[RMDB]
RNA sequence: GGGAACGACUCGAGUAGAGUCGAAAAGUAUCAAUUCUCCAAUGGGACCGAGCAGAGCUACCAGAAUACAGAUUGGAGGCUAUUUGUGCAGCAAUGAUUGAAUCAUGGGGCUACCCACAAUUAACUCCAGUAACACGUGUUUCGACACGUGUUACUGAAAAGAAACAACAACAACAAC
Reactivity to 2A3 in 0.01 (KOAc 150mM, MgCl2 10mM, bicine 150mM(pH8.5), 24C), signal-to-noise 6, nucleotides 027 to 126: g100u080a050u270c060a060a100u090u030c010u000c020c020a030a050u070g010g020g060a030c020c030g020a040g050c050a030g040a000g060c020u060a080c020c050a020g060a140a040u130a090c080a030g140a110u070u070g010g010a030g010g000c020u050a100u100u090u060g090u060g040c050a020g000c020a040a100u060g040a060u050u100g050a140a050u110c040a060u100g020g000g040g000c020u080a140c010c000c000a030c030a030a040u150u120a100a070c050u020c040
Reactivity to DMS in 0.01 (KOAc 150mM, MgCl2 10mM, bicine 150mM(pH8.5), 24C), signal-to-noise 3, nucleotides 027 to 126: g020u000a030u040c090a070a070u030u020c000u050c030c040a100a080u010g010g000g000a110c030c020g040a100g000c070a120g000a060g010c010u040a080c020c030a060g000a070a160u040a070c140a060g000a110u000u010g000g040a160g000g010c080u000a070u040u000u000g010u010g030c110a040g000c030a030a020u000g000a020u000u020g010a100a250u010c060a060u000g020g060g000g000c030u010a070c060c030c010a040c140a060a060u020u000a020a040c100u000c090
Structure probing data (2A3 and DMS) for a 177-nucleotide construct. For 2A3 the reverse transcriptase was SuperScript II with manganese. The 2A3 profile rests on 5,288 reads. Values cover nucleotides 27 to 126. Conditions: 150 mM KOAc, 10 mM MgCl2 and 150 mM bicine (pH 8.5), 24 C.